[RMDB]
RNA sequence: GGGAACGACUCGAGUAGAGUCGAAAAUGAAGGGCCGGAUCUAAUUUAGUACAUGGGAAAAGUUACUUAGUACUUCGGGAAAAGUUCCUUAGUACCGUGGAAACAUUUUUGAUGGACCGGAUCAUGACAUUAUUGUCAACUUCGGUUGACAAUAAUGAAAAGAAACAACAACAACAAC
Reactivity to DMS in 0.01 (KOAc 150mM, MgCl2 10mM, bicine 150mM(pH8.5), 24C), signal-to-noise 8, nucleotides 027 to 126: u000g000a150a150g010g000g010c010c010g000g000a210u000c000u000a020a010u000u000u000a040g000u000a140c000a000u010g010g000g000a150a200a220a070g000u010u000a020c010u000u000a050g010u000a110c000u000u050c180g020g010g000a080a170a250a110g000u000u000c040c000u000u000a050g010u010a120c000c000g020u000g000g000a150a180a130c300a000u000u000u000u000u000g000a300u080g000g010a030c010c000g000g010a110u000c040a030u010g010a300
Reactivity to 2A3 in 0.01 (KOAc 150mM, MgCl2 10mM, bicine 150mM(pH8.5), 24C), signal-to-noise 6, nucleotides 027 to 126: u080g010a030a050g030g020g030c000c000g000g000a000u000c000u010a010a000u000u000u000a000g000u000a000c000a010u010g010g010g000a000a000a010a000g010u000u010a000c000u000u000a000g000u000a010c000u030u080c260g050g000g000a000a010a000a000g000u000u000c000c000u000u000a000g000u000a000c000c000g000u000g010g000a000a000a000c010a010u000u020u010u020u030g020a030u060g010g070a090c000c010g020g010a060u070c030a060u080g030a030